[RMDB]
RNA sequence: GGGAACGACUCGAGUAGAGUCGAAAAUUGUGGUUUUUGUUAUUUUUCUACUUAUAGAUGGCUAAAAUCUGAGUUUGAAAGGUGGCCACUAUAAAUUCUUAAAAAGUGGCACCGCAUUUAGCCCCCCAGGUUAUACCGAAUUCGUUCGGUAUAACCUAAAAGAAACAACAACAACAAC
Reactivity to DMS in 0.01 (KOAc 150mM, MgCl2 10mM, bicine 150mM(pH8.5), 24C), signal-to-noise 2, nucleotides 027 to 126: u020u030g040u020g000g000u000u000u000u000u000g000u000u000a180u000u000u000u000u010c010u000a030c040u020u020a060u050a020g010a230u000g010g010c040u010a010a020a090a080u050c040u000g010a020g000u000u020u040g020a090a060a060g020g010u000g020g040c020c000a000c000u050a050u020a050a060a140u020u050c150u050u020a050a060a080a070a010g000u000g000g000c020a010c000c000g010c080a060u020u000u010a010g000c000c000c000c000c050c080
Reactivity to 2A3 in 0.01 (KOAc 150mM, MgCl2 10mM, bicine 150mM(pH8.5), 24C), signal-to-noise 3, nucleotides 027 to 126: u060u020g030u060g020g040u000u010u000u000u120g010u000u030a120u050u050u020u010u020c020u050a080c030u020u050a130u080a240g080a070u130g040g000c090u060a070a030a070a040u050c070u060g060a070g130u110u250u250g110a140a110a010g010g000u010g130g150c000c000a010c000u000a000u030a000a120a030u100u090c070u060u130a100a080a050a010a000g000u000g000g000c000a000c000c000g000c000a020u010u030u010a020g010c010c010c000c000c000c000
Record summary: This 177-nucleotide RNA was probed chemically with DMS and 2A3. DMS adducts were read by reverse transcription with MarathonRT. For DMS, 2,060 sequencing reads were counted. The 2A3 profile rests on 1,090 reads. The reactions ran in a buffer of 150 mM KOAc, 10 mM MgCl2 and 150 mM bicine (pH 8.5), at 24 C.